RNA sequence: GGGAACGACUCGAGUAGAGUCGAAAAGACCGAUAGCGAACAAGUAGCGUGAGCGAACGCUGAAAAGCACCCCACGAAGGGAGGUGCAAUAGGGCGUGAAAUCAGUUGGCGAUCGAACGACGGGGCAUGUACUAGCACCAUUCGUGGUGCUAGUACAAAAAGAAACAACAACAACAAC
Reactivity to DMS in 0.01 (KOAc 150mM, MgCl2 10mM, bicine 150mM(pH8.5), 24C), signal-to-noise 4, nucleotides 027 to 126: g000a180c070c020g000a040u030a130g000c020g000a100a060c080a050a090g010u030a090g020c020g040u020g000a140g000c000g010a110a060c030g010c040u000g000a050a140a140a190g000c020a000c000c000c000c000a140c180g030a160a170g000g010g040a030g010g020u010g020c030a030a050u020a140g000g000g020c010g000u000g000a060a090a080u020c110a040g020u020u010g020g000c010g000a050u020c030g000a040a060c060g000a040c020g010g000g000g000c090a150
Reactivity to 2A3 in 0.01 (KOAc 150mM, MgCl2 10mM, bicine 150mM(pH8.5), 24C), signal-to-noise 3, nucleotides 027 to 126: g030a030c020c010g050a050u110a030g060c040g030a030a050c020a170a000g100u030a000g070c030g030u020g000a000g020c010g010a010a000c010g000c000u040g020a050a100a000a000g000c000a000c010c000c020c000a090c150g100a080a110g130g000g030a180g030g000u000g010c000a000a030u110a080g100g020g000c010g010u020g000a000a000a140u080c030a010g000u060u020g130g020c010g040a010u000c010g040a020a070c030g010a020c030g000g000g000g040c070a030